Description:
Chemical mapping of a 207-nucleotide RNA with DMS and 2A3. For DMS the reverse transcriptase was MarathonRT. 2A3 adducts were read by reverse transcription with SuperScript II with manganese. It was measured as part of the RMDB library ARCHII.
[RMDB]
RNA sequence: GGGAACGACUCGAGUAGAGUCGAAAAGCUAGUCAGUCCGCUGGCAACACAAUCAAAUUGCGGGAAACUCCUUAGAGCUCAAGCUACCGCUGCUGCCCAGAGAUGGGCUGUGGCACCAGGUUAACGACCUCGGGUAUGGUAACAACGCCUGAGAUUGCAUUACUAACCAGUUCGCUGGUUAGUAAUGAAAAGAAACAACAACAACAAC
Reactivity to DMS in 0.01 (KOAc 150mM, MgCl2 10mM, bicine 150mM(pH8.5), 24C), signal-to-noise 2, nucleotides 027 to 156: g010c000u000a040g020u000c050a120g020u020c020c040g020c000u030g020g000c030a170a070c080a080c030a080a080u000c160a060a100a300u000u000g010c000g020g000g000a090a080a060c040u000c030c030u010u020a090g010a120g020c020u000c030a050a150g020c030u000a020c010c000g050c020u010g020c010u000g020c020c000c010a040g010a230g030a300u000g020g010g020c010u000g030u000g010g000c010a090c030c000a050g010g000u000u000a050a140c110g010a080c010c000u000c130g020g010g000u010a070u010g030g030u010a060a100c060a080a100c080g020c010c030u010g020a020g000a130u000u010g000
Reactivity to 2A3 in 0.01 (KOAc 150mM, MgCl2 10mM, bicine 150mM(pH8.5), 24C), signal-to-noise 6, nucleotides 027 to 156: g020c040u060a020g040u080c060a040g050u030c020c030g000c050u050g020g010c030a140a050c090a030c040a090a130u200c070a110a110a160u180u160g010c060g000g010g060a100a080a050c040u090c030c020u100u100a080g020a020g110c010u010c020a010a030g000c000u000a010c000c030g000c000u000g000c000u010g000c000c000c000a010g010a000g010a080u020g000g000g000c020u020g010u000g000g000c010a010c000c010a010g020g010u030u020a040a010c030g030a010c020c010u090c140g020g000g000u120a300u170g010g000u010a020a030c020a020a010c060g000c010c010u010g000a010g000a030u030u150g030